[RMDB]
Chemical mapping of a 177-nucleotide RNA with 2A3 and DMS. For DMS the reverse transcriptase was MarathonRT. The RNA was probed in 150 mM KOAc, 10 mM MgCl2 and 150 mM bicine (pH 8.5) at 24 C.
RNA sequence: GGGAACGACUCGAGUAGAGUCGAAAAGAUAUGGAAAUGUGAGAUGCCGAUGAAAGCCUUCGGAAACGAAGGCUGGAGGAACUACAUCGAUCAUUUCCUAAGUCAAAGAGGCGGUUCGCCGCCUCAACAAUGUUGCCUACUUCGGUAGGCAACAUUGAAAAGAAACAACAACAACAAC
Reactivity to 2A3 in 0.01 (KOAc 150mM, MgCl2 10mM, bicine 150mM(pH8.5), 24C), signal-to-noise 1, nucleotides 027 to 126: g020a000u030a040u080g000g020a000a000a000u010g020u000g030a060g000a040u040g070c000c090g230a300u070g010a050a000a000g030c000c000u020u000c000g020g000a100a030a010c010g000a020a010g000g050c000u000g020g020a000g020g010a040a020c100u190a030c130a000u020c010g020a020u040c010a000u040u020u000c010c020u000a000a000g060u000c050a120a030a160g040a010g000g000c010g000g050u080u070c220g010c140c010g000c020c000u050c010a010a000
Reactivity to DMS in 0.01 (KOAc 150mM, MgCl2 10mM, bicine 150mM(pH8.5), 24C), signal-to-noise 3, nucleotides 027 to 126: g010a010u010a300u010g000g010a010a030a020u000g010u010g000a300g000a000u000g000c010c040g010a100u010g010a250a110a050g000c000c000u020u000c000g010g000a100a090a140c000g000a000a000g000g030c000u000g000g030a060g000g000a110a050c090u020a240c000a010u000c000g000a220u000c000a020u000u010u000c010c000u000a010a090g010u030c060a040a090a080g010a030g000g020c000g020g000u000u010c280g020c000c000g010c000c000u010c000a020a050